[RMDB]
RNA sequence: GGGAACGACUCGAGUAGAGUCGAAAAAUUCAGGAGAGUAGAUGAUUCGCGUUAAGUGUGUGUGAAUGCGAUGUCGUCACACAACGAAGCGAGAGCGCGGUGAAUCAUUGCAUCCGCUCCAAACGAACAUGAGAGAGAGUUUCGACUCUCUCUCAUGAAAAGAAACAACAACAACAAC
Reactivity to 2A3 in 0.01 (KOAc 150mM, MgCl2 10mM, bicine 150mM(pH8.5), 24C), signal-to-noise 5, nucleotides 027 to 126: a000u090u070c050a020g020g000a040g010a020g040u150a060g010a090u010g000a010u020u040c010g010c020g030u040u070a170a040g070u150g010u010g000u010g010u010g220a220a100u050g020c090g150a110u170g180u260c020g000u010c000a000c000a000c000a030a030c030g050a090a000g010c030g030a060g010a010g030c050g000c020g030g050u070g040a000a000u020c010a010u020u030g000c010a050u030c020c050g010c020u010c020c000a060a100a030c090g020a020a000
Reactivity to DMS in 0.01 (KOAc 150mM, MgCl2 10mM, bicine 150mM(pH8.5), 24C), signal-to-noise 5, nucleotides 027 to 126: a140u000u010c080a130g010g000a040g010a090g020u000a150g010a020u000g000a030u000u000c000g010c010g000u010u010a090a140g010u010g020u000g010u000g000u000g010a060a060u010g030c030g010a070u010g010u000c070g010u010c000a010c000a000c010a040a030c040g010a090a110g020c020g010a150g000a110g010c010g010c070g010g010u000g010a020a020u000c020a030u000u000g010c050a110u000c050c040g020c010u000c010c020a070a070a110c190g010a060a110
The record gives the reactivity of an RNA of 177 nucleotides to 2A3 and DMS.
Source: RMDB library M2PK90, as collected in RNAgym.
The RNA was probed in 150 mM KOAc, 10 mM MgCl2 and 150 mM bicine (pH 8.5) at 24 C.
The 2A3 profile rests on 6,102 reads.